[RMDB]
RNA sequence: GGGAACGACUCGAGUAGAGUCGAAAAGAUAUGGAUUCAUCGUAGACAUGAUACCGAUCGGAAACGAUCGAGUAUCAACAGCUACGUGAAUCCUAAGUCAAAGAUUAACAGCUUCGGCUGUUAAUCAGACAUAAACAACCUUCGGGUUGUUUAUGUCAAAAGAAACAACAACAACAAC
Reactivity to 2A3 in 0.01 (KOAc 150mM, MgCl2 10mM, bicine 150mM(pH8.5), 24C), signal-to-noise 3, nucleotides 027 to 126: g000a000u030a020u060g000g000a000u010u000c010a110u300c090g000u000a010g050a100c160a300u190g000a010u000a000c000c010g000a010u000c000g000g010a050a010a010c010g020a000u000c000g000a030g000u010a010u010c000a020a010c080a030g020c000u000a000c000g000u000g000a000a000u000c000c000u000a010a000g000u000c050a190a060a080g020a000u000u000a000a000c000a000g010c010u070u180c300g300g000c000u000g000u000u000a000a000u000c000a010
Reactivity to DMS in 0.01 (KOAc 150mM, MgCl2 10mM, bicine 150mM(pH8.5), 24C), signal-to-noise 3, nucleotides 027 to 126: g000a010u010a090u010g000g000a010u000u000c000a010u030c030g010u000a000g010a040c130a130u020g010a020u000a000c000c000g020a000u000c010g000g000a020a020a050c000g020a010u000c000g000a090g010u000a000u000c010a060a070c200a250g000c010u000a000c000g020u000g000a010a000u000c000c000u000a010a070g000u000c000a140a170a150g000a020u000u000a000a010c000a010g010c010u000u010c290g020g010c000u000g020u000u000a000a000u000c000a070

Source: RMDB library TTRDES, as collected in RNAgym. Structure probing data (2A3 and DMS) for a 177-nucleotide construct. For 2A3, 9,019 sequencing reads were counted. The reactions ran in a buffer of 150 mM KOAc, 10 mM MgCl2 and 150 mM bicine (pH 8.5), at 24 C. For DMS the reverse transcriptase was MarathonRT.